Conditions: 150 mM KOAc, 10 mM MgCl2 and 150 mM bicine (pH 8.5), 24 C. Structure probing data (2A3) for a 207-nucleotide construct. 2A3 adducts were read by reverse transcription with SuperScript II with manganese.
[RMDB]
RNA sequence: GGGAACGACUCGAGUAGAGUCGAAAACCUAUACAAAAUGAGAUCCCAUCUUGCACACUGUGCUAAUUUGAGAUUCUCAUGCCUCCUACUUGGAGAGAUCUGGACUAGAAGUCAGGGCAUCUGACUCAAUACAUUCGUCAGUUCGCUGACGAAUGAAGACAAUAGGGCGGUUCGCCGCCCUAUUGUCAAAAGAAACAACAACAACAAC
Reactivity to 2A3 in 0.01 (KOAc 150mM, MgCl2 10mM, bicine 150mM(pH8.5), 24C), signal-to-noise 2, nucleotides 027 to 156: c000c010u070a070u090a150c040a010a140a020a010u000g000a000g000a000u000c000c000c000a010u000c040u000u000g030c000a010c060a080c220u300g000u000g000c020u150a060a020u000u010u020g000a030g000a000u220u110c020u030c000a000u020g010c020c000u000c000c000u060a220c070u160u250g010g000a010g000a000g010a050u100c140u160g070g020a090c050u040a120g050a150a020g210u010c000a000g000g050g190c040a140u090c120u010g000a000c030u020c000a000a050u090a080c000a000u000u000c000g000u000c000a000g000u000u110c240g000c160u010g000a000c010g030a000a000u000g010a010a020
The 2A3 profile rests on 853 reads.
The data come from the RNA Mapping Database (RMDB), library M2RFPK.